RNA sequence: GGGAACGACUCGAGUAGAGUCGAAAAAGCCUAGGAGUUCUGGGCUGUGGUGUGCUAUGCCAAUCAGGUGUCUGCACUAAGUUUGACAUCAAUAUGGUGACCUCCCAGGAGCAAGGGACCACCAGGUUGCCUAAGGAGGGAUGAAUUGGCCCAGGUAUAAUGAGUAUUACUUCGGUAAUACUCAUUAAAAAGAAACAACAACAACAAC
Reactivity to 2A3 in 0.01 (KOAc 150mM, MgCl2 10mM, bicine 150mM(pH8.5), 24C), signal-to-noise 4, nucleotides 027 to 156: a000g060c030c010u070a090g000g090a110g070u140u120c010u030g010g010g000c020u030g040u050g030g070u080g010u050g020c050u130a050u110g010c000c000a030a110u120c060a080g020g000u000g000u000c020u030g000c050a080c180u140a150a060g050u080u160u150g000a010c000a010u020c000a030a100u130a050u160g000g000u040g020a040c000c020u020c010c030c000a030g030g100a070g020c060a060a070g020g000g020a050c040c020a050c040c010a060g030g060u040u060g110c000c000u050a060a040g060g010a000g000g020g020a020u080g030a080a140u070u130g010g010c000c020c020a000g010g010u070a030
Reactivity to DMS in 0.01 (KOAc 150mM, MgCl2 10mM, bicine 150mM(pH8.5), 24C), signal-to-noise 4, nucleotides 027 to 156: a110g000c000c000u000a060g030g060a180g030u000u010c020u010g010g020g010c010u000g020u000g000g040u000g010u000g010c040u000a080u000g010c010c000a060a070u000c060a210g020g010u000g000u010c020u000g010c040a180c070u020a080a210g030u000u000u010g010a060c010a030u000c020a080a060u000a110u010g020g030u000g010a040c010c020u010c010c010c040a160g020g010a130g020c070a140a140g000g020g010a100c080c030a100c070c050a080g020g020u000u000g020c020c010u000a110a070g000g020a070g010g000g000a150u000g010a050a160u000u000g010g000c010c010c010a070g020g010u010a230
The record gives the reactivity of an RNA of 207 nucleotides to 2A3 and DMS. The data come from the RNA Mapping Database (RMDB), library OK3TST. For 2A3 the reverse transcriptase was SuperScript II with manganese. DMS adducts were read by reverse transcription with MarathonRT. The reactions ran in a buffer of 150 mM KOAc, 10 mM MgCl2 and 150 mM bicine (pH 8.5), at 24 C.